[RMDB]
RNA sequence: GGGAACGACUCGAGUAGAGUCGAAAAGAUAUGGAACUAUGGUGAGGCUUGGACCUCGGAAACGAGCUAGCCUCCCAUGAGUUCCUAAGUCAAAACAUCUAAAGGUAGUUCGCUACCUUUAGAUGAACGAUGUAACCAUCUUCGGAUGGUUACAUCGAAAAGAAACAACAACAACAAC
Reactivity to 2A3 in 0.01 (KOAc 150mM, MgCl2 10mM, bicine 150mM(pH8.5), 24C), signal-to-noise 2, nucleotides 027 to 126: g030a010u070a010u140g000g000a010a000c000u000a020u020g020g060u300g050a000g010g000c050u100u160g130g150a250c050c000u020c010g020g030a040a050a000c010g000a000g000c020u010a000g000c000c000u000c010c000c000a010u020g010a010g000u000u010c000c000u000a070a000g040u010c000a010a040a080a150c000a000u020c000u010a000a000a000g000g000u010a010g020u000u060c300g020c160u010a000c000c000u020u000u000a000g000a000u000g000a010a020
Reactivity to DMS in 0.01 (KOAc 150mM, MgCl2 10mM, bicine 150mM(pH8.5), 24C), signal-to-noise 3, nucleotides 027 to 126: g000a030u010a300u010g010g000a020a000c000u010a010u000g000g020u000g030a040g020g010c000u000u020g050g000a150c300c000u000c000g000g010a060a040a180c010g000a010g010c010u000a010g000c000c000u000c010c000c010a010u000g010a010g010u000u000c000c000u000a020a090g010u010c040a080a050a100a180c000a010u000c000u000a010a000a010g000g040u000a000g000u000u020c290g010c000u000a000c000c000u010u000u000a010g000a000u000g000a030a090